The data come from the RNA Mapping Database (RMDB), library OK3TST. Structure probing data (2A3 and DMS) for a 207-nucleotide construct. For DMS, 1,762 sequencing reads were counted. DMS adducts were read by reverse transcription with MarathonRT.

RNA sequence: GGGAACGACUCGAGUAGAGUCGAAAAUUCAAUAGUUUACUUUCGUUCAGCUUUUCCAUCUGAUACACUUGGGACUAUGAAGCAAUAUGUUCCUGAAUACAGAUAACUGGACUUUUCGAUACUCGCAGGAAUUUCUACACAUAUCGUUUAGCAUACACGACUAUAUGCGAUUCGUCGCAUAUAGUCGAAAAGAAACAACAACAACAAC
Reactivity to 2A3 in 0.01 (KOAc 150mM, MgCl2 10mM, bicine 150mM(pH8.5), 24C), signal-to-noise 5, nucleotides 027 to 156: u120u060c060a040a110u100a180g070u050u130u180a170c060u110u140u180c050g020u010u010c010a010g040c040u150u130u150u070c070c020a010u000c010u030g030a110u040a110c090a020c090u050u060g000g000g000a010c000u010a020u120g150a180a050g070c070a130a010u040a020u240g060u050u020c010c010u000g030a030a020u080a070c000a010g030a010u050a080a050c020u010g010g000a010c000u010u020u000u010c010g000a000u020a070c010u010c020g040c110a000g030g000a030a010u040u070u040c050u120a090c070a020c010a130u160a070u110c030g020u050u060u110a070g040c040a060u140a210c140a020
Reactivity to DMS in 0.01 (KOAc 150mM, MgCl2 10mM, bicine 150mM(pH8.5), 24C), signal-to-noise 1, nucleotides 027 to 156: u000u000c090a070a130u010a080g030u000u010u030a060c030u000u000u010c070g000u000u020c020a060g050c060u000u010u000u050c100c090a120u000c000u000g000a190u010a100c060a040c080u000u000g000g000g040a030c060u000a060u010g010a080a200g020c140a090a120u000a100u000g040u010u000c000c060u000g030a100a080u000a150c080a050g000a090u000a080a060c030u000g000g010a040c030u000u000u000u010c010g000a070u000a010c080u000c060g010c120a040g000g000a130a110u000u000u000c010u000a080c140a080c010a100u000a030u000c030g020u000u000u000a150g020c110a070u010a140c150a250